[RMDB]
RNA sequence: GGGAACGACUCGAGUAGAGUCGAAAAGAUAUGGACUAUCCUGAUCGCGAAGAACUCGGAAACGAGGGAGCGAUACAGGAGUAGUCCUAAGUCAAAAGAGGGCAAAAGCUUCGGCUUUUGCCCUCAAUCUCUAUCCAUGGUUCGCCAUGGAUAGAGAAAAAGAAACAACAACAACAAC
Reactivity to DMS in 0.01 (KOAc 150mM, MgCl2 10mM, bicine 150mM(pH8.5), 24C), signal-to-noise 2, nucleotides 027 to 126: g010a010u000a300u010g000g020a020c010u000a030u000c000c000u000g000a060u000c000g000c020g010a080a160g020a120a170c010u000c000g010g030a150a100a120c000g000a010g000g010g000a100g030c000g000a000u000a090c010a000g000g000a000g010u000a010g000u010c000c010u000a020a080g000u000c080a080a060a100a200g000a020g000g000g000c000a000a020a000a020g000c010u000u010c260g020g010c010u000u000u000u000g000c000c000c000u000c000a000a040